Chemical mapping of a 207-nucleotide RNA with 2A3 and DMS. The 2A3 profile rests on 1,976 reads. 2A3 adducts were read by reverse transcription with SuperScript II with manganese. Reactivities are rounded to 0.1 and cut off at 0 and 3. For DMS, 2,111 sequencing reads were counted.

RNA sequence: GGGAACGACUCGAGUAGAGUCGAAAAGCUCCUUCAGGUGAACGAUCUCGGUUGUUUCUCUGAAGGCAUGAUCACCCCGUCCGAUGCGGAAGUUCGUGCUUCCGUCGAACGCGAAGGUCGGACGGCGAAAACGAGUUACCGUUCGCGGUAACUCGAAUGUUGAUUACACGUUCGCGUGUAAUCAACAAAAAGAAACAACAACAACAAC
Reactivity to 2A3 in 0.01 (KOAc 150mM, MgCl2 10mM, bicine 150mM(pH8.5), 24C), signal-to-noise 3, nucleotides 027 to 156: g020c050u010c040c000u010u010c010a030g060g020u080g120a020a010c000g010a030u030c040u130c210g160g010u030u010g000u000u080u020c020u000c000u010g000a000a000g000g030c030a100u120g030a060u070c070a260c010c000c000c000g000u000c000c000g020a010u060g100c010g000g020a000a010g010u120u300c190g120u300g090c040u090u020c040c000g020u010c030g050a100a020c030g010c070g110a050a020g030g000u000c000g000g010a000c020g000g010c040g060a100a080a010a040c030g000a000g000u000u000a000c010c000g010u020u070c210g020c000g100g000u000a000a000c000u020c000g000a020a030
Reactivity to DMS in 0.01 (KOAc 150mM, MgCl2 10mM, bicine 150mM(pH8.5), 24C), signal-to-noise 1, nucleotides 027 to 156: g010c040u000c000c030u000u000c000a090g020g010u000g050a020a040c000g000a030u010c070u000c190g080g050u000u000g000u010u000u000c010u000c020u000g000a040a030g050g030c050a000u010g010a130u000c030a130c010c000c020c000g020u020c020c030g000a060u000g000c040g020g000a020a060g040u000u010c240g010u000g020c000u000u000c010c070g020u000c030g070a050a190c060g030c180g010a200a190g010g020u000c000g020g020a040c000g030g000c080g010a070a020a160a170c030g010a040g010u000u000a040c010c000g010u030u020c290g030c020g080g010u000a000a000c010u020c000g010a010a020